[RMDB]
Notes:
Chemical mapping of a 207-nucleotide RNA with 2A3.
RNA sequence: GGGAACGACUCGAGUAGAGUCGAAAACCUCACUACAUUUUACUGUUCCUAAAGAAUUUGUGACAGGUACAGUAAAACGUAUUGCAAGGUUUAUCAGUUCCGAUAAACAGGUAAAUAACAAUAUAUGAAAAGCAAAGACUGUUCGCAGUCUUUGCAAGAGCCUAAAGUCGUUCGCGACUUUAGGCUCAAAAGAAACAACAACAACAAC
Reactivity to 2A3 in 0.01 (KOAc 150mM, MgCl2 10mM, bicine 150mM(pH8.5), 24C), signal-to-noise 1, nucleotides 027 to 156: c000c000u000c000a000c050u000a000c000a000u050u030u000u000a000c000u000g020u120u110c000c020u110a150a190a110g160a300a300u300u300u300g110u080g030a110c050a060g000g020u000a000c000a020g000u000a000a000a000a000c000g000u020a000u010u010g080c080a080a000g190g050u000u000u030a130u050c030a020g000u150u050c020c120g050a060u080a050a060a060c020a020g000g160u260a020a030a090u180a260a000c020a130a060u130a000u050a080u300g060a260a000a000a000g000c000a000a000a000g020a000c000u050g050u130u120c160g000c050a000g000u020c000u000u000u000g030c000a000a000
The data come from the RNA Mapping Database (RMDB), library M2RFOK. The RNA was probed in 150 mM KOAc, 10 mM MgCl2 and 150 mM bicine (pH 8.5) at 24 C.